[RMDB]
Chemical mapping of a 177-nucleotide RNA with DMS and 2A3. For DMS the reverse transcriptase was MarathonRT. 2A3 is a SHAPE reagent: it acylates the 2'-hydroxyl of flexible nucleotides of all four kinds.
RNA sequence: GGGAACGACUCGAGUAGAGUCGAAAAGGACACGAGUGCUGCCGAUCGGCAUGCUGACCAGCGUCCAGUUCUGCUCGUUCCACAUCACCUCGGCGCAGUCAGGUGCCGUGUGCGCAAAGGUGACCAAGCGACCUCAUUACUUCGGUAAUGAGGUCGCAAAAGAAACAACAACAACAAC
Reactivity to DMS in 0.01 (KOAc 150mM, MgCl2 10mM, bicine 150mM(pH8.5), 24C), signal-to-noise 1, nucleotides 027 to 126: g000g000a080c020a020c050g030a180g010u000g020c030u000g070c040c070g000a090u000c070g020g000c000a000u000g000c000u010g000a040c150c030a120g010c070g020u000c030c040a030g060u000u000c040u000g010c020u000c040g010u010u000c030c010a130c060a150u010c050a050c110c000u020c300g000g010c010g010c000a070g020u000c000a030g010g010u000g030c020c010g000u000g000u000g000c020g000c030a020a060a080g000g010u000g000a100c180c070a080a150
Reactivity to 2A3 in 0.01 (KOAc 150mM, MgCl2 10mM, bicine 150mM(pH8.5), 24C), signal-to-noise 2, nucleotides 027 to 126: g000g010a000c030a030c070g090a060g160u080g040c130u110g000c060c020g200a260u220c030g010g060c020a020u160g260c040u020g020a000c000c060a020g020c010g030u000c010c000a010g010u070u050c060u050g090c040u020c030g030u060u060c010c030a140c000a150u090c010a040c000c020u000c000g000g000c020g040c020a010g070u020c010a010g040g030u010g000c020c010g050u040g040u060g020c040g000c000a040a020a010g130g000u000g000a000c010c010a100a020